An RNA of 177 nucleotides, treated with 2A3 and DMS and read out base by base. The 2A3 profile rests on 11,776 reads. The data come from the RNA Mapping Database (RMDB), library OK2TST. The RNA was probed in 150 mM KOAc, 10 mM MgCl2 and 150 mM bicine (pH 8.5) at 24 C. Values are in units of 0.01, from 0 to 300, in steps of 10. The DMS profile rests on 25,208 reads.

RNA sequence: GGGAACGACUCGAGUAGAGUCGAAAAUGCGCACGCUCCUCUUCGGUCGGCGCGGCGAUCGGCACGAUAUGGUACUGGCGCGGGUCCAGCGCGUCGGUGACACGGCGGAUGGCGCCGCCCUUGCCGACUAUUAAAUCCCUUUCGAGGGAUUUAAUAGAAAAGAAACAACAACAACAAC
Reactivity to 2A3 in 0.01 (KOAc 150mM, MgCl2 10mM, bicine 150mM(pH8.5), 24C), signal-to-noise 5, nucleotides 027 to 126: u080g020c050g010c030a060c090g030c020u040c000c000u050c050u090u080c040g020g020u020c040g000g010c040g010c000g040g010c020g020a070u030c010g100g000c070a060c230g030a090u060a080u300g060g000u050a010c020u030g000g010c010g000c040g020g050g060u090c080c040a060g050c020g000c000g000u020c000g000g010u010g010a010c010a010c030g030g010c030g060g010a050u090g120g070c020g010c000c000g000c000c000c000u010u030g000c010c000g010a010
Reactivity to DMS in 0.01 (KOAc 150mM, MgCl2 10mM, bicine 150mM(pH8.5), 24C), signal-to-noise 9, nucleotides 027 to 126: u010g010c050g020c070a100c080g010c040u000c020c020u000c150u000u000c070g010g010u010c170g010g010c140g010c040g020g010c030g000a060u000c010g010g020c020a090c070g010a150u010a110u000g010g010u000a030c030u000g000g000c000g010c010g010g010g010u010c080c110a120g000c010g010c010g020u000c000g020g010u000g000a050c040a070c060g000g000c010g000g000a080u000g010g010c040g010c010c010g010c020c080c030u000u000g020c000c010g010a070